[RMDB]
RNA sequence: GGGAACGACUCGAGUAGAGUCGAAAACGCGUCAUGUUCGCAUGACGCGCAUUACCGAGAAAGGAGCUCGGUAUAAAACUCCAACGCUUGGAAACAAGGGAAAACCGAUAGUAUUCGUACUAUCGAAACAGUUAUUUAUCUUCGGAUAAAUAACUGUAAAAGAAACAACAACAACAAC
Reactivity to 2A3 in 0.01 (KOAc 150mM, MgCl2 10mM, bicine 150mM(pH8.5), 24C), signal-to-noise 3, nucleotides 027 to 126: c020g000c000g000u000c000a000u000g020u030u040c130g000c130a000u000g000a000c000g010c000g000c000a000u010u070a030c000c010g000a000g000a050a300a050g120g030a050g070c000u000c000g000g020u010a010u010a010a010a010a020c020u020c010c000a090a100c050g060c130u030u030g010g000a040a060a020c020a020a010g000g000g090a020a070a050a090c050c010g010a010u000a000g000u000a010u040u060c170g030u030a000c000u000a000u000c000g010a020a080
Reactivity to DMS in 0.01 (KOAc 150mM, MgCl2 10mM, bicine 150mM(pH8.5), 24C), signal-to-noise 2, nucleotides 027 to 126: c010g000c010g010u000c000a010u000g000u000u010c220g030c020a000u010g000a010c020g010c000g020c060a020u010u010a150c020c010g010a020g010a070a110a150g000g000a100g030c000u000c010g000g000u000a020u000a030a050a070a090c040u000c020c010a140a140c200g000c000u000u000g000g000a170a110a180c020a020a030g020g000g010a080a030a100a130c240c010g000a010u000a000g020u000a030u000u000c170g000u000a000c000u010a000u000c010g010a070a080
This 177-nucleotide RNA was probed chemically with 2A3 and DMS. For 2A3 the reverse transcriptase was SuperScript II with manganese. The RNA was probed in 150 mM KOAc, 10 mM MgCl2 and 150 mM bicine (pH 8.5) at 24 C. For 2A3, 5,369 sequencing reads were counted.